Structure probing data (2A3 and DMS) for a 207-nucleotide construct. Reactivities are rounded to 0.1 and cut off at 0 and 3. For DMS the reverse transcriptase was MarathonRT.
RNA sequence: GGGAACGACUCGAGUAGAGUCGAAAAGCUUACGCUCCAAGAUCGGUGGAUAGCAGCCCUAUCAAUAUCUAGGAGAACUGUGCUAUGUUUAGAAGAUUAGGUAGUCUCUAAACAGAACAAUUUACCUCAUACGUUAGGACGUUCGCGUCCUAACGAACAUAUAAAAUAGCUUCGGCUAUUUUAUAUGAAAAGAAACAACAACAACAAC
Reactivity to 2A3 in 0.01 (KOAc 150mM, MgCl2 10mM, bicine 150mM(pH8.5), 24C), signal-to-noise 9, nucleotides 027 to 156: g000c000u100u110a020c060g010c010u000c010c010a040a020g020a040u070c130g100g250u130g110g030a030u030a030g040c070a030g030c050c010c000u030a030u030c030a060a070u030a010u160c010u050a060g010g010a020g020a060a070c090u120g010u030g060c010u020a020u050g010u000u000u000a070g000a300a010g000a030u050u040a020g010g040u030a010g010u010c000u000c000u000a000a010a000c010a010g030a040a030c100a030a020u040u060u070a020c000c010u070c050a090u110a170c010g000u000u000a000g000g000a000c010g010u040u040c240g010c010g080u000c000c000u000a000a000c000g000a000a000
Reactivity to DMS in 0.01 (KOAc 150mM, MgCl2 10mM, bicine 150mM(pH8.5), 24C), signal-to-noise 4, nucleotides 027 to 156: g010c010u010u000a120c080g020c020u000c010c020a090a220g020a060u000c100g030g030u000g010g020a090u000a050g040c080a220g010c130c080c010u010a130u000c030a100a120u000a090u000c050u000a140g020g020a300g010a060a060c040u000g020u010g020c000u000a150u000g010u000u000u000a010g010a060a090g000a030u000u000a100g050g010u000a150g010u010c010u000c010u000a010a010a020c010a040g010a090a040c040a050a060u000u000u000a100c010c000u000c090a100u000a130c010g010u000u000a010g000g010a020c000g020u000u000c300g010c010g000u000c010c000u000a000a010c000g010a030a110